[RMDB]
Structure probing data (DMS) for a 177-nucleotide construct. The DMS profile rests on 1,041 reads. For DMS the reverse transcriptase was MarathonRT.

RNA sequence: GGGAACGACUCGAGUAGAGUCGAAAAGCUGUCGGGCACCCAGUCUUCCUCCCGCACCUCGAAUCCCGACUCGCCCUCGCUGUCGGCGAAGCGGUAGUGGAGGGUGAGGUUGAGUCCUAUGCCGAACCGGAUCCUAGUCAUUCGUGACUAGGAUCCGAAAAGAAACAACAACAACAAC
Reactivity to DMS in 0.01 (KOAc 150mM, MgCl2 10mM, bicine 150mM(pH8.5), 24C), signal-to-noise 1, nucleotides 027 to 126: g040c020u000g000u010c050g000g000g000c040a070c050c020c030a140g000u000c050u020u000c020c040u010c090c020c050g040c070a080c020c010u020c070g000a180a100u010c030c000c000g000a170c020u000c020g050c010c000c010u000c020g000c000u000g000u000c010g030g000c120g040a150a140g010c000g000g000u000a040g040u000g030g040a030g000g010g020u010g000a020g020g000u000u000g000a140g030u000c020c060u020a120u020g000c090c040g000a080a090c250